[RMDB]
Annotation:
An RNA of 177 nucleotides, treated with 2A3 and DMS and read out base by base. For 2A3 the reverse transcriptase was SuperScript II with manganese. As a SHAPE reagent, 2A3 marks flexible, mostly unpaired nucleotides at the ribose 2'-OH. In probing experiments dimethyl sulfate is read out at A N1 and C N3, which are open when not base-paired. The RNA was probed in 150 mM KOAc, 10 mM MgCl2 and 150 mM bicine (pH 8.5) at 24 C.

RNA sequence: GGGAACGACUCGAGUAGAGUCGAAAAGAUAUGGAGCUUUAUCCUUUUGACGCACCAUUUGAGUCGGAAACGACGAGGUGCGAUAAGGAUACUGAGCUCCUAAGUCAAACCCCGGUUCGCCGGGGAAGAUUUAAGUCUAGUUCGCUAGACUUAAAUCAAAAGAAACAACAACAACAAC
Reactivity to 2A3 in 0.01 (KOAc 150mM, MgCl2 10mM, bicine 150mM(pH8.5), 24C), signal-to-noise 5, nucleotides 027 to 126: g030a020u070a050u140g010g000a010g000c010u050u030u020a000u010c000c000u020u080u100u210g170a100c020g000c000a010c010c030a120u160u120u300g140a070g000u000c000g000g010a070a050a040c010g000a000c020g010a060g000g000u000g000c000g000a000u010a010a000g000g000a000u010a040c060u050g020a010g000c010u000c000c000u010a050a010g000u000c000a040a050a300c010c000c000c010g020g050u050u030c290g030c040c000g010g000g030g010a000a040
Reactivity to DMS in 0.01 (KOAc 150mM, MgCl2 10mM, bicine 150mM(pH8.5), 24C), signal-to-noise 7, nucleotides 027 to 126: g000a040u000a300u000g000g000a020g010c010u000u010u000a000u000c000c000u000u000u010u010g010a190c080g010c010a020c000c000a300u000u000u010g010a150g010u000c000g010g000a110a090a130c000g010a010c000g000a080g010g020u000g010c010g000a020u000a010a010g010g010a020u000a020c300u010g010a020g000c010u000c000c000u000a010a060g000u000c020a140a140a200c020c000c000c000g000g000u000u010c210g020c000c000g000g000g010g000a000a010